[RMDB]
RNA sequence: GGGAACGACUCGAGUAGAGUCGAAAAGAUAUGGAAGUCUCUCAGGGAGACUGUGGUCGGAAACGACCACAAGUCAUCGAUCUGAGGAGACUUCCUAAGUCAAACCACGAACCUUCGGGUUCGUGGAGUAUAGGAUGGUGUUCGCACCAUCCUAUACAAAAGAAACAACAACAACAAC
Reactivity to DMS in 0.01 (KOAc 150mM, MgCl2 10mM, bicine 150mM(pH8.5), 24C), signal-to-noise 4, nucleotides 027 to 126: g010a020u000a300u010g000g000a000a010g010u000c000u000c000u000c010a020g010g000g010a060g020a030c010u000g010u000g000g010u000c010g010g000a090a080a240c010g020a010c000c000a000c000a010a060g030u000c020a230u000c200g000a100u010c010u000g010a060g010g030a030g000a000c000u010u000c000c000u000a010a060g000u000c020a090a150a260c010c010a010c010g000a010a010c000c000u000u010c260g040g020g020u000u000c000g010u000g000g000a030
Reactivity to 2A3 in 0.01 (KOAc 150mM, MgCl2 10mM, bicine 150mM(pH8.5), 24C), signal-to-noise 4, nucleotides 027 to 126: g010a000u070a030u130g000g000a000a000g010u000c000u020c000u010c000a000g070g070g020a090g010a020c020u010g000u000g000g020u010c010g020g020a090a050a080c010g010a000c020c010a010c020a020a030g000u000c020a160u300c050g080a110u070c010u030g030a170g120g050a060g030a000c000u020u000c000c000u000a040a000g010u020c040a080a060a080c000c000a000c000g010a000a000c010c020u110u190c300g170g000g000u000u000c000g000u000g000g000a030